[RMDB]
RNA sequence: GGGAACGACUCGAGUAGAGUCGAAAACAGUCAAUGUGAAGGCGGGCCAGACCAUCGCCGCAUUCUACCAGAGCACCGUCAUGAUCUUUGGCACGAUGGCUCGCUACAUACACAGAGUUAGGGAAAAACUGAGCGAGCAUUUCGAUGCUCGCUCAGUAAAAGAAACAACAACAACAAC
Reactivity to DMS in 0.01 (KOAc 150mM, MgCl2 10mM, bicine 150mM(pH8.5), 24C), signal-to-noise 1, nucleotides 027 to 126: c120a080g000u000c160a050a150u020g010u000g000a220a130g000g000c030g010g020g030c010c020a080g030a100c140c090a090u000c150g000c080c040g020c160a030u000u000c050u000a030c150c040a070g000a110g030c090a040c050c020g000u030c100a060u000g000a040u040c070u000u000u000g010g030c060a150c100g030a120u020g010g040c010u000c010g000c000u000a050c040a070u000a090c000a040c040a110g000a090g000u030u020a020g070g020g020a040a030a060a090